The record gives the reactivity of an RNA of 177 nucleotides to 2A3 and DMS. For DMS the reverse transcriptase was MarathonRT.
[RMDB]
RNA sequence: GGGAACGACUCGAGUAGAGUCGAAAAGAUAGGGGGUUCGCCCCCUAUCAAAGGUGCAAUGUACAUUCUGCACCAAAGACGGAAAAACCGUCAAAGUACAAAAAACGAUGGCGUUCGCGCCAUCGAACUUAGUGAAUUUCUUCGGAAAUUCACUAAGAAAAGAAACAACAACAACAAC
Reactivity to 2A3 in 0.01 (KOAc 150mM, MgCl2 10mM, bicine 150mM(pH8.5), 24C), signal-to-noise 2, nucleotides 027 to 126: g000a010u020a010g000g000g000g010g000u000u020c020g120c030c000c000c000c010u020a000u010c000a000a000a000g000g010u000g030c010a090a240u080g020u070a030c000a090u170u110c040u090g010c000a010c000c010a010a050a000g000a000c010g020g000a210a050a000a090a130c000c020g000u000c000a030a040a000g010u030a030c000a010a210a010a020a060a000c010g000a000u000g000g000c020g020u030u090c270g010c010g000c030c000a000u000c000g000a000a000
Reactivity to DMS in 0.01 (KOAc 150mM, MgCl2 10mM, bicine 150mM(pH8.5), 24C), signal-to-noise 1, nucleotides 027 to 126: g020a000u010a010g020g000g020g040g020u000u000c210g020c010c000c000c000c020u000a000u000c000a030a090a150g000g010u000g000c010a060a060u000g010u000a080c070a090u000u040c120u010g000c000a000c010c000a010a060a130g010a000c010g000g010a090a150a160a160a140c000c000g000u000c000a010a100a180g020u000a040c020a020a110a050a060a090a110c050g000a010u000g000g040c000g000u000u020c080g020c010g020c000c000a000u000c010g000a060a080